The data come from the RNA Mapping Database (RMDB), library OK3TST. This 207-nucleotide RNA was probed chemically with 2A3 and DMS. For DMS, 5,754 sequencing reads were counted. DMS adducts were read by reverse transcription with MarathonRT. Conditions: 150 mM KOAc, 10 mM MgCl2 and 150 mM bicine (pH 8.5), 24 C.

RNA sequence: GGGAACGACUCGAGUAGAGUCGAAAAGAUUAUGUGGGAGAUGCGCCCGGUCGUGUCACUGGAAACAGAAUUGCGAGUCGCUCGCUCUAGCGAUAUUGAUGUGUACAGUAGCGUACACUGUGCUACUUUAAGGUAUAAUGACGAUACCACGUCAAAAACCGAUAAUAUCGUUCGCGAUAUUAUCGGUAAAAGAAACAACAACAACAAC
Reactivity to 2A3 in 0.01 (KOAc 150mM, MgCl2 10mM, bicine 150mM(pH8.5), 24C), signal-to-noise 5, nucleotides 027 to 156: g060a020u130u120a080u210g040u110g030g050g020a090g020a040u060g030c030g030c040c060c060g010g010u060c030g020u040g030u070c020a010c040u030g050g020a050a080a020c030a040g110a110a080u160u130g040c030g010a020g040u020c000g000c020u010c000g020c050u060c040u050a030g000c010g010a000u020a070u120u100g090a090u060g030u010g000u030a010c020a040g040u090a040g090c050g040u050a030c040a010c050u030g050u070g030c020u040a050c020u060u080u120a040a030g040g010u070a060u060a190a170u070g020a000c000g000a000u020a020c010c010a010c020g020u010c010a000a040a020a050
Reactivity to DMS in 0.01 (KOAc 150mM, MgCl2 10mM, bicine 150mM(pH8.5), 24C), signal-to-noise 3, nucleotides 027 to 156: g000a170u000u010a030u000g020u000g010g020g000a120g010a060u010g020c040g000c040c020c070g000g030u000c020g020u000g010u000c030a070c040u000g020g010a130a090a190c080a130g020a070a090u010u010g010c020g010a070g020u000c030g010c020u000c030g020c060u040c060u000a050g040c040g000a090u010a080u000u000g020a060u000g020u000g040u000a080c080a110g040u000a050g010c040g030u010a080c040a060c000u000g020u000g010c010u000a070c090u000u000u000a070a100g020g000u000a040u000a040a090u010g010a110c030g000a080u010a080c040c020a090c020g000u010c020a020a020a050a090